[RMDB]
Chemical mapping of a 177-nucleotide RNA with DMS. For DMS the reverse transcriptase was MarathonRT. The RNA was probed in 150 mM KOAc, 10 mM MgCl2 and 150 mM bicine (pH 8.5) at 24 C.
RNA sequence: GGGAACGACUCGAGUAGAGUCGAAAAUCUAACUCAUUCGUGAGUUAGAGUGAGCGCAGCGACGAUUGGGCCGGUGGCGCGCUGUCGGUGCCGCGCGUGGCGAUAGUGCUUGCUUCGGCAAGCACAAAUUGCGCGAAAGUUUCGACUUUCGCGCAAUAAAAGAAACAACAACAACAAC
Reactivity to DMS in 0.01 (KOAc 150mM, MgCl2 10mM, bicine 150mM(pH8.5), 24C), signal-to-noise 1, nucleotides 027 to 126: u010c010u000a010a020c000u010c000a020u010u020c170g030u000g000a010g020u010u000a000g010a040g010u000g020a170g040c030g020c020a050g010c010g020a020c020g000a080u030u010g010g010g020c020c010g010g000u000g030g020c130g020c080g010c030u000g010u000c010g000g000u000g010c050c020g000c040g020c010g010u010g020g000c080g020a110u000a080g010u000g020c000u000u000g020c010u000u000c180g020g030c000a010a010g010c000a010c010a020a050